[RMDB]
An RNA of 177 nucleotides, treated with 2A3 and DMS and read out base by base.
For DMS the reverse transcriptase was MarathonRT.
2A3 adducts were read by reverse transcription with SuperScript II with manganese.
It was measured as part of the RMDB library OK2TRN.
Conditions: 150 mM KOAc, 10 mM MgCl2 and 150 mM bicine (pH 8.5), 24 C.

RNA sequence: GGGAACGACUCGAGUAGAGUCGAAAACGGCCAGGGGGCUCCGAUCCUUUUGGACCGAGGCUGAAGCAACGGCUGCACCAGAGAAGGCCUUCUGGCUGAAGGUGGAAGUGCACGGGGUCCGCAGAACGACGCUUACGUAGUUCGCUACGUAAGCGUCAAAAGAAACAACAACAACAAC
Reactivity to 2A3 in 0.01 (KOAc 150mM, MgCl2 10mM, bicine 150mM(pH8.5), 24C), signal-to-noise 1, nucleotides 027 to 126: c020g010g030c000c010a030g030g000g000g000g000c030u040c050c000g060a090u010c030c020u070u140u130u250g000g000a080c000c030g050a050g030g000c030u110g090a160a010g120c020a060a100c050g020g000c030u060g000c010a020c010c000a000g060a000g020a070a070g050g010c000c000u030u030c030u020g030g010c010u000g010a000a010g020g030u090g020g060a140a030g050u080g060c100a010c140g070g000g000g000u000c030c040g040c040a020g010a060a000c010
Reactivity to DMS in 0.01 (KOAc 150mM, MgCl2 10mM, bicine 150mM(pH8.5), 24C), signal-to-noise 2, nucleotides 027 to 126: c090g010g030c000c000a040g020g020g010g010g020c020u010c090c110g020a070u000c000c030u000u000u010u000g000g020a040c050c030g030a140g000g000c030u010g000a110a100g020c060a100a100c120g010g000c120u000g010c100a050c080c070a110g020a100g040a090a130g010g010c000c010u000u000c010u000g000g000c000u000g000a060a020g000g050u000g030g000a130a040g030u000g020c030a060c060g000g000g000g000u000c040c050g030c080a140g000a110a150c150